[RMDB]
RNA sequence: GGGAACGACUCGAGUAGAGUCGAAAAAGCAGGAGCGGGAGCUGCUGAGGAGCUGCGAGGCCGGCAGCAAGCGCGCCAGAGUCAACGCGCUCCCCGCAGACAUUGAGACGAGCUGCAAGGCAUGGGCCUUCAGGUUAUCCUUCGGGAUAACCUGAAGAAAAGAAACAACAACAACAAC
Reactivity to 2A3 in 0.01 (KOAc 150mM, MgCl2 10mM, bicine 150mM(pH8.5), 24C), signal-to-noise 1, nucleotides 027 to 126: a000g050c030a000g010g060a020g000c010g020g030g030a030g000c010u010g020c000u010g020a160g060g090a090g060c050u060g000c140g010a070g000g000c030c000g070g000c020a000g040c010a110a000g150c090g020c010g000c060c010a030g040a070g050u060c020a080a000c020g030c000g000c040u050c000c000c000c000g000c010a000g040a080c040a080u100u160g080a060g000a150c080g040a020g000c020u000g000c010a030a120g040g000c050a080u090g000g070g010c030
Reactivity to DMS in 0.01 (KOAc 150mM, MgCl2 10mM, bicine 150mM(pH8.5), 24C), signal-to-noise 3, nucleotides 027 to 126: a080g010c030a020g000g000a120g040c050g000g010g000a170g000c000u000g000c010u000g020a120g030g010a070g020c000u010g020c120g020a190g000g000c050c010g020g010c000a040g010c010a130a160g010c140g020c030g020c020c050a090g000a140g000u010c020a050a120c020g000c020g000c020u000c140c010c010c060g000c010a080g000a080c070a090u010u000g000a110g010a110c100g000a060g000c040u000g000c090a060a060g000g020c020a050u000g010g010g000c090

Chemical mapping of a 177-nucleotide RNA with 2A3 and DMS. The DMS profile rests on 1,964 reads. For 2A3 the reverse transcriptase was SuperScript II with manganese.